[RMDB]
RNA sequence: GGGAACGACUCGAGUAGAGUCGAAAAGAUAUGGAGGUCUACCCACCCUCAGAGGUCUGAUGACCUCGGAAACGAGCAAGGACUGAUGAGGAGGACCUCCUAAGUCAAAGCUCCCUUCGGGGAGCAACAAAUACCUUUCGUUCGCGAAAGGUAUUUGAAAAGAAACAACAACAACAAC
Reactivity to DMS in 0.01 (KOAc 150mM, MgCl2 10mM, bicine 150mM(pH8.5), 24C), signal-to-noise 4, nucleotides 027 to 126: g020a100u010a150u030g000g010a020g000g030u000c000u020a170c010c010c040a300c120c000c000u010c010a020g000a300g000g000u010c000u000g000a100u020g000a060c300c000u000c000g000g020a050a080a160c010g020a010g010c040a050a150g000g020a010c000u000g010a300u000g000a010g010g010a130g010g000a000c000c000u010c010c000u000a020a090g010u010c120a090a110a200g010c000u000c000c000c000u000u010c160g040g010g020g000a010g010c010a020a040
Reactivity to 2A3 in 0.01 (KOAc 150mM, MgCl2 10mM, bicine 150mM(pH8.5), 24C), signal-to-noise 2, nucleotides 027 to 126: g070a090u160a230u280g020g000a000g000g030u020c010u080a240c030c000c010a010c010c010c010u030c010a010g000a030g040g000u000c030u030g110a180u110g020a300c010c000u000c000g000g020a020a040a030c000g000a000g020c030a100a190g030g000a000c010u030g020a030u010g010a030g000g000a020g000g010a000c000c010u010c000c000u010a010a000g040u020c020a090a100a060g000c030u010c030c000c000u020u070c190g060g000g000g040a010g040c020a020a000
Annotation:
An RNA of 177 nucleotides, treated with DMS and 2A3 and read out base by base. The RNA was probed in 150 mM KOAc, 10 mM MgCl2 and 150 mM bicine (pH 8.5) at 24 C. DMS adducts were read by reverse transcription with MarathonRT.